RNA sequence: GGGAACGACUCGAGUAGAGUCGAAAACAAAACAAAAAGAUAGCAAAGCACGCAUGCUAUCAGAGAUGAAAUAAGCAAGCGCGCUUGCUUAGAAAACAAAACAAAACAAAAACAAAACAAAACAAAACGGUUGUAUAAAGUUCGCUUUGUGCGGCCGAAAAGAAACAACAACAACAAC
Reactivity to DMS in 0.01 (KOAc 150mM, MgCl2 10mM, bicine 150mM(pH8.5), 24C), signal-to-noise 2, nucleotides 027 to 126: c070a060a080a070a060c060a040a070a060a120a080g000a100u020a000g000c020a030a060a110g000c040a010c030g000c020a110u000g020c000u000a070u000c000a000g000a170g000a120u010g000a020a120a120u020a110a010g010c000a010a020g010c050g050c030g010c010u030u000g000c000u000u010a000g000a070a040a040a100c120a070a090a070a030c130a040a050a030a090c090a020a030a030a080a100c040a040a070a020a060c070a050a030a060a050c080a000a080a080a040
Reactivity to 2A3 in 0.01 (KOAc 150mM, MgCl2 10mM, bicine 150mM(pH8.5), 24C), signal-to-noise 5, nucleotides 027 to 126: c010a000a040a000a000c050a020a070a050a010a010g070a040u040a000g000c000a010a090a010g020c010a010c030g020c010a010u030g000c000u010a000u010c000a000g030a000g000a040u080g010a020a090a040u070a060a000g000c010a030a040g000c030g000c000g010c000u000u000g000c000u010u010a050g080a010a130a000a010c060a010a060a000a010c040a010a070a000a010c070a020a090a020a000a000c030a010a060a010a000c030a010a080a000a010c010a000a050a010a000